Conditions: 150 mM KOAc, 10 mM MgCl2 and 150 mM bicine (pH 8.5), 24 C. The record gives the reactivity of an RNA of 177 nucleotides to DMS and 2A3. The 2A3 profile rests on 1,767 reads.
RNA sequence: GGGAACGACUCGAGUAGAGUCGAAAAAGUAUCGGGUUCGCCCGAUACUAGAGGACCACUCCUGCGGGAGUUAAGGCCAAACGCACAGGCGGGUGCAAAGCCAACUCAAGGGUUUCGACCCUUGAAACAUUGAUUCAGCUUUCGAGCUGAAUCAAUGAAAAGAAACAACAACAACAAC
Reactivity to DMS in 0.01 (KOAc 150mM, MgCl2 10mM, bicine 150mM(pH8.5), 24C), signal-to-noise 2, nucleotides 027 to 126: a000g000u000a000u000c000g020g000g030u000u020c230g020c000c000c020g020a020u000a000c000u010a060g000a130g000g030a130c020c030a030c010u000c000c010u010g030c170g020g000g020a020g010u000u000a040a090g010g010c010c030a060a060a080c190g010c020a010c040a090g010g010c110g010g020g000u000g020c040a060a180a120g030c030c050a120a130c200u000c000a010a020g000g020g000u000u000u010c130g030a040c010c010c010u000u000g000a010a110a150
Reactivity to 2A3 in 0.01 (KOAc 150mM, MgCl2 10mM, bicine 150mM(pH8.5), 24C), signal-to-noise 1, nucleotides 027 to 126: a020g000u000a000u000c000g010g020g060u030u050c130g100c030c000c010g000a000u000a010c000u000a000g020a060g020g070a060c000c000a010c060u030c020c000u080g050c170g010g000g020a010g000u030u110a020a030g000g000c020c010a130a000a030c060g050c020a050c010a050g100g120c100g110g100g030u060g060c000a120a040a000g010c030c010a030a080c010u000c000a000a010g040g000g010u000u070u140c190g050a060c000c000c000u000u000g000a000a010a010